[RMDB]
An RNA of 207 nucleotides, treated with DMS and 2A3 and read out base by base.
Source: RMDB library RNAMAK, as collected in RNAgym.
RNA sequence: GGGAACGACUCGAGUAGAGUCGAAAACUUGGUUUCGACCAAGGGAUCGCGUACUACGGUGCCAUCGCAGAUAUAGGCUACCCACCACUUUCCCAAAUAGGAAAGUGAGGCCUAUGUAGAUGUGCACCGUAUCGCAGGCUGUCGGCUUCGGCCGAAACAGCCUUAGACGCUUCGGCGUCUAAGGCUGAAAAGAAACAACAACAACAAC
Reactivity to DMS in 0.01 (KOAc 150mM, MgCl2 10mM, bicine 150mM(pH8.5), 24C), signal-to-noise 1, nucleotides 027 to 156: c000u000u000g000g000u000u000u000c150g040a100c000c030a010a040g000g000g000a150u010c070g000c070g100u000a050c080u000a020c000g020g020u000g010c040c000a020u000c010g020c150a300g020a130u000a050u000a010g020g020c000u000a000c010c020c030a300c090c010a050c010u010u000u000c000c000c010a040a110a220u000a050g050g000a000a020a020g020u000g000a070g020g000c010c000u000a050u000g030u000a140g000a030u000g020u020g020c000a040c030c000g040u000a000u000c010g000c010a120g050g000c050u000g020u000c040g000g010c050u000u000c280g060g030c010c000g000a000a040a180
Reactivity to 2A3 in 0.01 (KOAc 150mM, MgCl2 10mM, bicine 150mM(pH8.5), 24C), signal-to-noise 2, nucleotides 027 to 156: c020u000u020g010g010u040u080u180c200g110a020c010c000a000a000g040g000g050a140u280c180g000c010g030u090a060c080u000a010c030g000g000u000g000c000c000a000u000c000g090c260a080g160a230u110a010u010a140g000g000c000u050a160c040c070c020a040c010c000a000c000u010u000u000c000c030c040a290a300a120u300a130g000g000a000a000a000g020u000g000a000g000g000c050c000u080a010u000g030u030a090g000a000u050g070u120g060c000a000c020c000g000u000a000u000c000g020c000a000g060g070c090u090g000u160c000g000g000c000u070u000c240g080g000c000c020g000a000a020a000

For 2A3 the reverse transcriptase was SuperScript II with manganese.
2A3 is a SHAPE reagent: it acylates the 2'-hydroxyl of flexible nucleotides of all four kinds.
The RNA was probed in 150 mM KOAc, 10 mM MgCl2 and 150 mM bicine (pH 8.5) at 24 C.